[RMDB]
RNA sequence: GGGAACGACUCGAGUAGAGUCGAAAAUAUCAAAGAUAGACGAUACGAAAGUAUCGACCGGAUUGUUGGGACGCGGGAUUUCCGGCGGUUAGGCCCGGACACUGGAGGAUGUGAUUAUUCCCAGAGGGUGCUAGAUCCAUUUCGAUGGAUCUAGCACAAAAGAAACAACAACAACAAC
Reactivity to DMS in 0.01 (KOAc 150mM, MgCl2 10mM, bicine 150mM(pH8.5), 24C), signal-to-noise 2, nucleotides 027 to 126: u010a090u010c040a090a090a130g000a090u010a060g000a230c060g040a020u000a010c020g000a120a120a200g000u000a010u000c000g000a120c030c040g000g000a080u010u000g020u000u000g020g020g010a090c040g030c030g010g010g000a220u000u010u000c010c010g020g050c100g020g000u020u010a080g040g000c010c000c030g000g000a050c140a040c060u010g010g000a110g010g010a050u010g000u010g000a120u000u000a110u010u000c000c010c020a180g010a140g010g020